[RMDB]
RNA sequence: GGGAACGACUCGAGUAGAGUCGAAAAGAUAUGGAUCACUGCCAAUUGCAACAGCGUCUUCAAAGUAGCGUUAUCGGAAACGAUAACGCUACUUUGAAGACGACAUGCAGAUGGUUGAUCCUAAGUCGUCUAAAAAUUAGUUCGCUAAUUUUUAGACAAAAGAAACAACAACAACAAC
Reactivity to DMS in 0.01 (KOAc 150mM, MgCl2 10mM, bicine 150mM(pH8.5), 24C), signal-to-noise 2, nucleotides 027 to 126: g020a110u010a300u000g010g010a010u010c010a070c300u010g050c000c010a030a170u000u000g000c000a040a060c110a250g000c040g010u000c000u000u000c000a010a020a000g040u000a010g030c000g000u020u000a000u000c000g020g010a110a110a240c020g000a020u000a000a020c000g000c000u000a000c010u000u000u000g010a020a000g000a000c000g010a010c070a080u000g010c000a010g000a050u010g010g020u000u000g010a020u000c000c000u010a060a090g020u010c110

Conditions: 150 mM KOAc, 10 mM MgCl2 and 150 mM bicine (pH 8.5), 24 C. This 177-nucleotide RNA was probed chemically with DMS. It was measured as part of the RMDB library TTRINS. For DMS, 2,391 sequencing reads were counted.